Structure probing data (DMS and 2A3) for a 207-nucleotide construct. The RNA was probed in 150 mM KOAc, 10 mM MgCl2 and 150 mM bicine (pH 8.5) at 24 C. It was measured as part of the RMDB library OK3TST.
RNA sequence: GGGAACGACUCGAGUAGAGUCGAAAACAGAUGGCAGCAAAAAAUCAAACCAACUGAUGACUCGCCUGAUUUGCUCAUAGAUUGGGUGCUGCUUGAAGAUGAGUUAAUUCUUUGCUCUCGUGGGUCUGAAUUCAAGACAGAAUUUUUCCAAACAGUCACCAACUUAUACCUUCGGGUAUAAGUUGGUAAAAGAAACAACAACAACAAC
Reactivity to DMS in 0.01 (KOAc 150mM, MgCl2 10mM, bicine 150mM(pH8.5), 24C), signal-to-noise 1, nucleotides 027 to 156: c000a110g020a080u010g040g080c020a010g020c040a000a000a060a070a000a050u020c010a100a070a080c060c000a030a110c060u000g010a200u010g010a100c040u000c020g040c000c000u010g010a040u000u000u000g000c190u020c160a130u010a060g000a060u010u030g030g020g000u000g020c040u000g010c020u010u000g020a170a060g010a090u000g010a060g010u000u000a040a120u010u000c040u020u010u000g010c010u000c020u000c070g020u000g040g010g010u000c040u010g000a080a100u010u000c070a050a150g030a110c040a160g000a040a060u000u000u000u000u000c010c010a090a040a050c080a120g000u000c050
Reactivity to 2A3 in 0.01 (KOAc 150mM, MgCl2 10mM, bicine 150mM(pH8.5), 24C), signal-to-noise 4, nucleotides 027 to 156: c000a010g090a060u070g040g000c010a010g000c020a020a120a080a000a010a050u200c100a110a060a050c020c010a040a020c020u080g070a080u080g030a070c010u010c080g040c010c030u060g060a100u090u060u140g080c070u060c050a070u060a110g130a190u050u060g040g010g000u040g000c030u010g020c000u050u090g040a060a030g030a080u130g010a010g040u020u050a070a100u120u040c010u060u040u020g000c000u000c000u010c030g050u070g040g020g040u000c030u020g060a030a040u070u090c030a080a040g060a060c020a010g050a030a030u030u050u030u090u070c040c010a050a120a030c050a110g090u120c020